[RMDB]
RNA sequence: GGGAACGACUCGAGUAGAGUCGAAAAGGAUCGAAGAUGAUUAGAUACCGUUGUAGUCCUAACCAUAAACUUUACUAUCCAAGAGUUGGAUUAGUUAUUUUAUACUCUUCCAGUACUUUUUGAGAAAGUAUCGGUAGUGGUUCGCCACUACCGAUACAAAAGAAACAACAACAACAAC
Reactivity to 2A3 in 0.01 (KOAc 150mM, MgCl2 10mM, bicine 150mM(pH8.5), 24C), signal-to-noise 4, nucleotides 027 to 126: g010g000a010u130c030g040a030a040g090a100u190g000a030u080u170a060g060a170u120a190c060c010g020u020u240g020u060a030g040u000c010c000u000a030a030c020c000a060u150a120a090a010c010u040u100u280a120c030u050a070u000c010c000a030a000g020a030g020u020u000g000g000a020u000u000a000g010u010u040a110u060u190u030u060a070u020a030c000u000c000u000u020c000c020a010g040u050a050c010u000u060u050u050u050g080a090g020a030a090a010
Reactivity to DMS in 0.01 (KOAc 150mM, MgCl2 10mM, bicine 150mM(pH8.5), 24C), signal-to-noise 1, nucleotides 027 to 126: g000g000a030u000c030g000a120a180g000a080u000g030a080u010u030a060g030a030u030a140c070c030g000u030u000g000u030a050g000u000c070c000u030a180a120c080c100a300u020a020a030a120c110u000u030u060a040c080u040a110u000c000c030a000a030g000a000g000u000u080g000g000a030u000u000a000g000u000u000a010u000u020u150u060a070u030a020c020u000c000u000u000c000c000a040g030u050a070c060u000u000u010u080u000g010a050g000a000a040a150

Background:
The data come from the RNA Mapping Database (RMDB), libraries RFM100 and RFMREP. Structure probing data (2A3 and DMS) for a 177-nucleotide construct. For 2A3 the reverse transcriptase was SuperScript II with manganese. DMS adducts were read by reverse transcription with MarathonRT.